[RMDB]
RNA sequence: GGGAACGACUCGAGUAGAGUCGAAAAAAAGCUGCGUAAGUUCAGUUGAGCCUGAAAUUUAAGUCAUACUAUCUAGCUUAAUUUUCGGUCAUUUUUGAUAGUGUAGCCUUGCGUUUGACAAGCGUUGAGGUGAAAUAAGGUCUUAGCCUUGCUUUUGACGUACCGAGUAGUUCGCUACUCGGUACGUAAAAGAAACAACAACAACAAC
Reactivity to 2A3 in 0.01 (KOAc 150mM, MgCl2 10mM, bicine 150mM(pH8.5), 24C), signal-to-noise 1, nucleotides 027 to 156: a000a000a000g000c030u060g030c080g090u170a290a210g020u180u070c010a030g000u070u070g080a030g050c040c020u050g020a010a010a010u000u000u000a010a000g020u030c030a010u010a050c010u000a010u000c000u000a010g000c000u000u010a020a000u000u020u000u000c070g110g050u120c260a280u040u180u090u150u300g000a000u000a000g000u010g020u010a010g000c010c000u000u000g000c050g040u040u090u090g050a000c030a020a020g010c010g040u080u290g030a010g000g000u030g010a010a030a000u150a010a010g000g010u020c000u040u060a040g010c000c000u050u080g010c000u080u080u030u090g230